[RMDB]
RNA sequence: GGGAACGACUCGAGUAGAGUCGAAAAAAAAAGAUAUGGACAGUAAUUGCGACAAAGGCUUGGAUUUACACCUCGGAAACGAGGUGUUGUCAGCCUUUGAGAACGCACCACUGUCCUAAGUCAAAAAGUUAUUUCAAUCCUUCGGGAUUGAAAUAACAAAAGAAACAACAACAACAAC
Reactivity to DMS in 0.01 (KOAc 150mM, MgCl2 10mM, bicine 150mM(pH8.5), 24C), signal-to-noise 1, nucleotides 027 to 126: a020a100a050a130a130g000a040u000a300u000g020g000a010c000a000g000u000a270a090u000u000g020c000g020a120c020a020a000a020g000g000c010u000u020g000g000a020u010u000u000a000c000a000c000c000u000c010g020g000a070a040a100c000g010a000g000g030u000g000u000u000g000u000c020a030g010c000c000u000u000u020g000a130g030a020a150c020g000c010a070c300c110a020c000u010g000u000c000c000u000a000a090g000u000c030a050a080a060a050a050
This 177-nucleotide RNA was probed chemically with DMS. The RNA was probed in 150 mM KOAc, 10 mM MgCl2 and 150 mM bicine (pH 8.5) at 24 C. It was measured as part of the RMDB library TTRDES.